[RMDB]
Structure probing data (DMS and 2A3) for a 177-nucleotide construct. Reactivities are given for positions 27 through 126. The 2A3 profile rests on 21,306 reads. 2A3 adducts were read by reverse transcription with SuperScript II with manganese. The reactions ran in a buffer of 150 mM KOAc, 10 mM MgCl2 and 150 mM bicine (pH 8.5), at 24 C. Values are in units of 0.01, from 0 to 300, in steps of 10. For DMS, 37,916 sequencing reads were counted.
RNA sequence: GGGAACGACUCGAGUAGAGUCGAAAAGAGAAAGCUCUUCGUAGAGCUAACAGGGGAAAACUCGAGAGGACUGCAUGACGUGCUUCGCGAAAGUAGAGACGUGGGGAAUGGAGACCGUAGAUUUAGCACUAGGAAGGAAAUUCGUUUCCUUCCUAGUAAAAGAAACAACAACAACAAC
Reactivity to DMS in 0.01 (KOAc 150mM, MgCl2 10mM, bicine 150mM(pH8.5), 24C), signal-to-noise 9, nucleotides 027 to 126: g010a120g030a120a120a050g020c000u000c000u000u040c240g020u060a060g010a020g010c010u000a050a120c080a090g000g000g010g000a080a060a070a090c050u010c050g020a080g000a140g000g000a090c050u010g000c070a070u030g020a080c080g010u010g020c020u000u000c050g010c050g010a080a050a070g010u020a080g000a060g000a040c080g020u010g000g000g000g000a060a070u010g000g000a100g010a080c090c070g000u020a050g010a130u010u010u020a080g010c180
Reactivity to 2A3 in 0.01 (KOAc 150mM, MgCl2 10mM, bicine 150mM(pH8.5), 24C), signal-to-noise 9, nucleotides 027 to 126: g130a000g040a040a080a010g010c010u020c010u120u070c120g220u300a020g010a000g010c000u020a040a020c040a060g020g000g020g020a010a040a060a060c040u040c030g040a050g010a020g090g040a040c030u060g020c050a080u100g040a050c040g040u070g040c020u050u050c020g020c010g080a130a060a010g040u100a030g030a010g000a050c030g020u060g010g010g000g030a030a080u060g030g010a040g020a040c010c040g010u030a020g010a140u070u110u160a040g010c010